Conditions: 150 mM KOAc, 10 mM MgCl2 and 150 mM bicine (pH 8.5), 24 C. This 177-nucleotide RNA was probed chemically with DMS and 2A3. The 2A3 profile rests on 1,826 reads.
[RMDB]
RNA sequence: GGGAACGACUCGAGUAGAGUCGAAAAGUGCUUAUCUGAUUGUCGUUUAGUGAGUACGGAAUGGGGUCGUAACUUGACUGUGAAACCGGCAAUAUAUCAACGUCAAAGCUUAACGUAUUUGUAAACGACCCUUCCAAAUUUUCGAAUUUGGAAGGGUAAAAGAAACAACAACAACAAC
Reactivity to DMS in 0.01 (KOAc 150mM, MgCl2 10mM, bicine 150mM(pH8.5), 24C), signal-to-noise 4, nucleotides 027 to 126: g010u010g010c040u000u010a070u000c060u000g010a130u000u000g010u000c010g010u000u000u000a040g010u010g010a070g010u000a020c010g000g010a140a100u010g010g010g010g010u000c030g020u000a060a110c120u000u010g010a020c010u000g010u000g000a050a120a100c090c060g000g000c040a050a070u010a080u000a110u000c060a050a050c070g000u000c040a030a040a120g010c060u000u000a050a100c110g010u010a040u010u010u000g010u000a030a070a090c150g010
Reactivity to 2A3 in 0.01 (KOAc 150mM, MgCl2 10mM, bicine 150mM(pH8.5), 24C), signal-to-noise 2, nucleotides 027 to 126: g030u020g040c030u130u090a110u100c050u070g140a160u090u070g070u050c000g000u050u000u010a050g020u010g030a010g020u050a060c010g020g050a140a090u100g010g000g000g060u030c020g000u010a050a050c010u060u090g110a010c020u060g050u050g160a060a050a030c010c000g020g010c020a030a010u080a020u010a010u160c010a030a030c010g010u030c020a050a040a050g050c000u010u080a040a020c020g030u040a060u000u090u150g090u070a120a000a000c040g230